RNA sequence: GGGAACGACUCGAGUAGAGUCGAAAAGAACUUUGGCCGGCUCGGAAUAGAAUCAGGGGGUGCAAACUGCCCACUGGCAGAAAGGAUUAUGGCAAAUGCGUACCCUAUUGCAAUACAGCCCGGCCAACAUAGACUACUCUAUUCGUAGAGUAGUCAACCUGACUAGUAGAUUCGUCUACUAGUCAGGAAAAGAAACAACAACAACAAC
Reactivity to DMS in 0.01 (KOAc 150mM, MgCl2 10mM, bicine 150mM(pH8.5), 24C), signal-to-noise 2, nucleotides 027 to 156: g030a100a150c080u000u020u000g020g050c030c010g010g090c030u000c070g030g000a210a100u000a090g010a230a120u000c100a030g000g020g010g020g060u000g000c080a060a130a210c180u000g000c000c000c060a070c120u000g000g020c040a080g000a080a150a150g030g000a150u000u000a090u020g040g030c030a030a110a150u000g010c120g020u000a100c020c000c000u010a060u010u020g030c060a080a150u010a090c000a050g020c070c010c000g030g000c000c010a010a000c130a120u000a110g000a030c010u010a020c000u000c010u010a060u010u010c300g030u000a020g000a020g010u000a010g010u010c010a020a070
Reactivity to 2A3 in 0.01 (KOAc 150mM, MgCl2 10mM, bicine 150mM(pH8.5), 24C), signal-to-noise 4, nucleotides 027 to 156: g040a080a010c040u070u010u050g000g010c020c000g000g010c020u030c070g020g080a060a060u130a150g070a060a040u160c080a150g010g000g010g000g000u070g000c020a040a030a060c050u030g000c000c000c020a100c070u040g040g020c070a040g170a120a100a030g060g020a110u100u150a050u300g000g000c000a010a040a030u020g000c020g020u140a140c000c000c020u050a080u020u090g120c040a050a030u030a130c000a060g020c030c050c020g000g000c010c000a000a000c010a000u060a010g000a000c000u000a000c000u000c000u010a040u030u060c110g050u090a000g010a000g000u010a000g000u010c000a000a000